[RMDB]
Conditions: 150 mM KOAc, 10 mM MgCl2 and 150 mM bicine (pH 8.5), 24 C.
The record gives the reactivity of an RNA of 207 nucleotides to 2A3.
Reactivities are given for positions 27 through 156.
RNA sequence: GGGAACGACUCGAGUAGAGUCGAAAAUUAGAUACCGCAUAGCCAUCCGAAACCACGUCUGUAAUCACCAAGUCAGUACCGGGAAUCUCGUAAAAACUAGGAGUCUUGCGAAUCUCCUGAUGAGUCUGCCACUUGGUUGGCUGAAUACCAUACUCGACCCUCCGUCAUAUUUCGAUAUGACGGAGGGAAAAGAAACAACAACAACAAC
Reactivity to 2A3 in 0.01 (KOAc 150mM, MgCl2 10mM, bicine 150mM(pH8.5), 24C), signal-to-noise 1, nucleotides 027 to 156: u200u060a020g030a080u080a090c010c050g050c050a000u050a050g000c000c000a030u020c030c050g000a020a000a080c000c050a030c020g080u090c080u090g050u090a050a060u060c040a000c080c030a010a010g080u140c020a000g010u070a070c040c000g000g000g050a000a000u000c000u020c170g020u080a010a090a030a120a090c000u020a050g160g000a000g110u140c090u110u020g030c020g010a000a030u010c010u050c050c010u040g020a100u120g000a050g100u000c000u020g040c070c030a070c070u020u030g030g010u020u050g010g000c000u000g020a000a000u040a120c020c020a000u020a130c050u000c030g080a110
For 2A3, 574 sequencing reads were counted.